[RMDB]
RNA sequence: GGGAACGACUCGAGUAGAGUCGAAAAAGUCUUCAUAGUGUAUGCGCCGCGCUCAGCACUGUACGGCAUAAUAAGACGGUUUAAGGGACGAGACCUUCGCAUAGAAAUACGACCAGUUUAUACGGGCACGCAAACUCUAUUUCGAUAGAGUUUGCGUAAAAGAAACAACAACAACAAC
Reactivity to 2A3 in 0.01 (KOAc 150mM, MgCl2 10mM, bicine 150mM(pH8.5), 24C), signal-to-noise 1, nucleotides 027 to 126: a000g020u040c020u080u040c040a030u120a050g080u060g030u040a100u040g050c040g000c030c070g030c010g030c030u040c070a020g000c030a000c030u010g020u090a030c050g020g000c010a000u040a160a070u060a140a090g080a020c000g040g030u000u020u080a050a050g060g000g000a020c050g020a020g000a080c020c000u050u040c030g030c010a020u030a170g110a030a120a000u110a100c030g040a060c000c000a020g010u050u110u010a090u000a060c030g000g010g080c060
Reactivity to DMS in 0.01 (KOAc 150mM, MgCl2 10mM, bicine 150mM(pH8.5), 24C), signal-to-noise 3, nucleotides 027 to 126: a100g010u000c030u020u000c060a070u010a060g020u020g010u000a050u010g010c080g030c020c070g010c100g020c040u000c070a050g020c070a040c100u000g010u000a060c090g030g000c030a070u010a060a090u010a100a070g000a080c040g010g010u000u000u010a150a060g000g010g010a100c060g010a080g030a110c040c020u000u010c020g020c080a020u020a050g010a050a050a090u000a040c150g000a090c030c020a080g000u000u000u010a080u020a110c080g020g000g020c130
Structure probing data (2A3 and DMS) for a 177-nucleotide construct. 2A3 adducts were read by reverse transcription with SuperScript II with manganese. Conditions: 150 mM KOAc, 10 mM MgCl2 and 150 mM bicine (pH 8.5), 24 C.